[RMDB]
RNA sequence: GGGAACGACUCGAGUAGAGUCGAAAAAGAAGGUGAGGCAGUUCUGAACCAUGCUGCCUUCCACUGGUUAAGACCUCCGAGAGCGAAGGCCUGCAGAGGCAGAGGAAGUCCCUCUGCCGCCCCCAGAGUCCAUUGUCAGUUUCGACUGACAAUGGACAAAAGAAACAACAACAACAAC
Reactivity to DMS in 0.01 (KOAc 150mM, MgCl2 10mM, bicine 150mM(pH8.5), 24C), signal-to-noise 2, nucleotides 027 to 126: a090g000a140a090g000g000u030g000a030g000g030c000a020g000u000u000c090u010g000a170a240c070c190a040u010g000c000u000g020c000c000u010u000c070c000a120c030u000g010g000u000u010a200a160g000a050c070c000u000c000c020g000a090g000a140g000c060g020a070a090g010g000c030c020u000g040c090a120g000a080g000g040c010a020g000a040g000g000a200a210g000u000c240c000c010u000c000u020g000c000c000g000c040c000c000c010c010a200g000a180
Reactivity to 2A3 in 0.01 (KOAc 150mM, MgCl2 10mM, bicine 150mM(pH8.5), 24C), signal-to-noise 2, nucleotides 027 to 126: a000g190a060a010g030g010u080g000a010g010g000c000a010g000u130u050c030u220g110a090a050c080c000a040u140g010c000u010g000c000c000u030u020c020c000a030c020u020g040g000u110u090a090a030g010a030c000c000u000c000c010g050a050g020a050g040c040g040a060a050g050g000c000c010u010g040c020a000g030a090g110g010c000a000g000a010g000g030a070a070g150u090c000c020c030u000c000u010g000c000c000g010c000c000c000c000c000a030g020a060

The data come from the RNA Mapping Database (RMDB), library RFM100. This 177-nucleotide RNA was probed chemically with DMS and 2A3. For DMS the reverse transcriptase was MarathonRT. Reactivities are given for positions 27 through 126. The reactions ran in a buffer of 150 mM KOAc, 10 mM MgCl2 and 150 mM bicine (pH 8.5), at 24 C.